[RMDB]
RNA sequence: GGGAACGACUCGAGUAGAGUCGAAAAUAUAUAUGUAAUACAACAAACAAUAAAAGGUGAUGCGAAUGACAAAAAUUUGGUGUACAAGCUGAUUUUUUCUCAGCUUUGUCAUAUGCCGGCAAACGUCUGGAUGCUAAUAAUUCGUUAUUAGCAUCCAAAAAGAAACAACAACAACAAC
Reactivity to DMS in 0.01 (KOAc 150mM, MgCl2 10mM, bicine 150mM(pH8.5), 24C), signal-to-noise 5, nucleotides 027 to 126: u010a050u040a060u020a090u010g000u020a100a080u030a130c060a090a080c090a070a130a100c100a080a090u030a050a070a080a090g010g000u000g000a070u010g010c070g000a050a080u010g000a030c040a040a050a080a090a120u010u020u010g020g020u000g020u020a060c070a010a010g010c010u000g000a000u000u010u030u020u070u020c220u000c010a010g000c000u000u010u010g000u000c060a050u000a030u000g010c040c020g000g010c110a030a050a060c170g000u000c090
Reactivity to 2A3 in 0.01 (KOAc 150mM, MgCl2 10mM, bicine 150mM(pH8.5), 24C), signal-to-noise 4, nucleotides 027 to 126: u150a020u040a010u020a060u060g020u060a070a100u120a100c060a080a030c040a050a190a010c030a080a080u150a120a100a070a020g050g000u070g010a050u070g010c030g060a040a070u060g020a020c050a050a060a050a100a050u170u160u200g020g000u090g010u040a030c030a020a000g010c000u000g030a080u020u010u020u010u230u140c060u000c030a000g000c000u030u050u060g010u000c010a040u080a040u160g030c000c000g030g050c050a050a080a060c050g030u010c010